[RMDB]
RNA sequence: GGGAACGACUCGAGUAGAGUCGAAAAUUGCACGACCUGAAUCACUAGGAAAGUACUAAAUAGUUUAAAAGAAUAGAUGUGAUACAGUAGGCGGAGAGCAAGCGUUUUGUAACAUCUACGCUGGCUACUGUGAUUCUUUUUUCGAAAAGAAUCACAGAAAAGAAACAACAACAACAAC
Reactivity to 2A3 in 0.01 (KOAc 150mM, MgCl2 10mM, bicine 150mM(pH8.5), 24C), signal-to-noise 3, nucleotides 027 to 126: u130u120g020c060a040c110g020a020c000c000u000g010a040a030u030c010a020c020u030a020g060g080a200a180a020g070u060a030c020u130a120a120a300u200a120g040u080u120u230a150a200a030a050g060a090a050u100a100g050a050u120g020u020g010a000u010a040c000a010g040u040a010g080g000c110g110g080a270g020a000g060c040a040a000g000c000g010u010u050u060u010g010u020a020a030c010a060u000c030u020a010c010g000c000u000g030g000c000u050a080
Reactivity to DMS in 0.01 (KOAc 150mM, MgCl2 10mM, bicine 150mM(pH8.5), 24C), signal-to-noise 3, nucleotides 027 to 126: u000u000g000c050a100c040g010a140c160c010u010g020a160a040u000c030a030c020u000a180g010g010a150a150a110g000u000a080c040u000a070a090a150u010a100g020u000u000u000a080a090a100a120g000a140a070u000a060g010a150u000g000u000g030a050u000a080c030a030g020u010a100g000g020c030g010g000a090g020a040g000c030a030a010g030c010g010u000u010u000u000g020u000a070a110c120a110u000c000u010a000c050g030c010u000g000g000c030u000a080